[RMDB]
This 207-nucleotide RNA was probed chemically with 2A3. It was measured as part of the RMDB library OK3TST.
RNA sequence: GGGAACGACUCGAGUAGAGUCGAAAAACACGCUGCCAGGCUGCCUCUGCCCGGCAGCGAAGAGCUGCCGUGUCUGCUUUCACACGCUGAGGCUGUAAGGCGCACAGAGGAGAAAGGAGAGCCAGGACUCAGCUGCAGUGGAUGGAGCAGACACACAAAGUAAGUAGGACUUCGGUCCUACUUACUUAAAAGAAACAACAACAACAAC
Reactivity to 2A3 in 0.01 (KOAc 150mM, MgCl2 10mM, bicine 150mM(pH8.5), 24C), signal-to-noise 1, nucleotides 027 to 156: a000c020a000c000g000c000u000g000c000c000a010g010g020c000u020g050c010c050u060c040u020g050c000c030c000g000g000c030a030g000c050g010a080a000g020a010g040c100u140g050c010c120g020u010g000u000c000u000g090c040u040u250u300c020a030c000a010c010g020c000u010g000a030g100g000c000u000g040u040a150a170g030g000c090g020c070a070c040a030g080a000g050g000a030g170a080a210a080g240g040a160g030a020g020c010c000a040g060g040a030c030u000c020a000g000c030u080g030c010a010g030u040g050g040a140u130g050g000a050g000c000a000g000a000c000a000c000a000c010a010